[RMDB]
RNA sequence: GGGAACGACUCGAGUAGAGUCGAAAAAUCCAGCUUGGGCUGACGAGAGGCUCCGGAGCCUUCACGUUCAGUGCUUUUUACCUGCCAAUCAAACUGCUACAAGACAACACCCUGAUCUGGCAUGGUCUCCUUAACGUCACUUCGGUGACGUUAAGGAAAAAGAAACAACAACAACAAC
Reactivity to DMS in 0.01 (KOAc 150mM, MgCl2 10mM, bicine 150mM(pH8.5), 24C), signal-to-noise 2, nucleotides 027 to 126: a010u010c010c000a250g010c160u010u030g020g040g000c030u000g030a000c000g030a300g000a040g000g030c000u000c060c210g000g000a090g000c000c030u000u000c040a130c050g000u050u000c000a000g040u030g000c020u040u000u040u000u010a090c030c000u010g030c020c020a090a000u000c010a040a110a060c110u040g020c060u000a000c190a080a150g010a220c180a140a080c120a160c120c030c080u050g000a000u000c140u000g000g040c000a010u020g000g000u050c060
Reactivity to 2A3 in 0.01 (KOAc 150mM, MgCl2 10mM, bicine 150mM(pH8.5), 24C), signal-to-noise 3, nucleotides 027 to 126: a000u000c000c020a000g000c110u170u170g080g030g000c000u030g020a000c010g040a000g000a000g070g000c000u070c140c080g300g070a040g000c000c000u050u140c110a090c060g050u140u070c000a000g000u080g100c000u100u130u010u080u100a010c000c000u010g000c010c000a020a040u010c030a020a020a160c020u070g020c000u210a160c050a080a130g070a100c030a150a000c020a170c050c020c020u040g010a040u010c000u030g010g050c030a050u210g030g000u000c000
An RNA of 177 nucleotides, treated with DMS and 2A3 and read out base by base. For DMS the reverse transcriptase was MarathonRT. The 2A3 profile rests on 1,721 reads. The reactions ran in a buffer of 150 mM KOAc, 10 mM MgCl2 and 150 mM bicine (pH 8.5), at 24 C.